The record gives the reactivity of an RNA of 207 nucleotides to DMS and 2A3. The DMS profile rests on 3,560 reads. The RNA was probed in 150 mM KOAc, 10 mM MgCl2 and 150 mM bicine (pH 8.5) at 24 C.

[RMDB]
RNA sequence: GGGAACGACUCGAGUAGAGUCGAAAAGAGUUCCUCUUCCUCCUCCCGGCUGAGGCUCUUCCCUCCUCCGGAGAGCUGCUUCUUCUUGUUCUCGAGGGCCUUCCUUCUUCGGUGGUCCUGCCUCUCCUUGUCGGUGAAGUCUCCCCUGUGAGGCCUCGGAAGAUGUAUAGUUCGCUAUACAUCUUCCAAAAGAAACAACAACAACAAC
Reactivity to DMS in 0.01 (KOAc 150mM, MgCl2 10mM, bicine 150mM(pH8.5), 24C), signal-to-noise 1, nucleotides 027 to 156: g010a130g000u000u000c030c020u000c020u000u000c020c010u010c000c040u010c020c030c050g040g020c030u020g040a070g000g010c040u010c020u000u000c030c030c010u010c050c020u000c040c090g000g010a050g020a050g010c070u000g020c010u000u020c080u000u000c060u000u020g010u010u000c050u000c020g040a090g010g020g000c030c010u020u020c030c040u000u010c080u000u000c130g000g050u000g070g020u000c010c020u020g030c090c030u000c020u020c030c030u010u000g030u010c040g010g010u010g020a060a150g010u000c020u000c010c000c060c100u010g020u030g000a090g020g000c040c040u010c110
Reactivity to 2A3 in 0.01 (KOAc 150mM, MgCl2 10mM, bicine 150mM(pH8.5), 24C), signal-to-noise 2, nucleotides 027 to 156: g070a000g000u060u230c010c010u030c020u040u010c000c020u010c010c010u060c050c000c020g000g000c020u040g000a010g020g000c010u060c010u070u080c000c000c010u020c010c010u010c000c020g000g030a050g020a010g020c040u060g020c030u110u130c010u140u020c020u100u270g110u170u040c110u040c120g020a050g000g010g050c010c010u220u280c010c000u100u250c040u150u140c040g010g000u030g010g000u040c010c040u060g000c010c000u060c020u030c030c000u020u120g110u030c020g000g080u050g040a060a000g070u000c010u000c040c000c000c010u030g070u050g020a000g040g000c010c030u060c030

Record summary
2A3 adducts were read by reverse transcription with SuperScript II with manganese.